Record summary: This 177-nucleotide RNA was probed chemically with DMS. DMS adducts were read by reverse transcription with MarathonRT. Values cover nucleotides 27 to 126.

[RMDB]
RNA sequence: GGGAACGACUCGAGUAGAGUCGAAAAAAACUGGUUGGCCCGAUGAUCACCUACCUGCUGCCAUUGCUGAUCGGUUUUACCGGCGGCCGUUUGGUCGGGGGAGAUCGUGGCGGCGUGGUCGGCGCUAUCAUCGGGGAUGAUUCGUCAUCCCCGAUGAAAAAGAAACAACAACAACAAC
Reactivity to DMS in 0.01 (KOAc 150mM, MgCl2 10mM, bicine 150mM(pH8.5), 24C), signal-to-noise 1, nucleotides 027 to 126: a030a010a050c060u010g030g010u010u000g030g030c040c010c020g020a050u000g000a050u000c070a060c020c020u000a070c030c010u010g000c030u000g000c000c020a040u000u010g020c110u020g020a070u000c010g010g000u000u010u010u000a180c000c000g000g050c030g040g020c030c040g000u000u020u010g030g050u000c010g000g010g000g030g000a090g000a010u000c000g010u000g020g030c050g030g010c030g030u000g010g010u000c050g000g030c030g020c220u000a060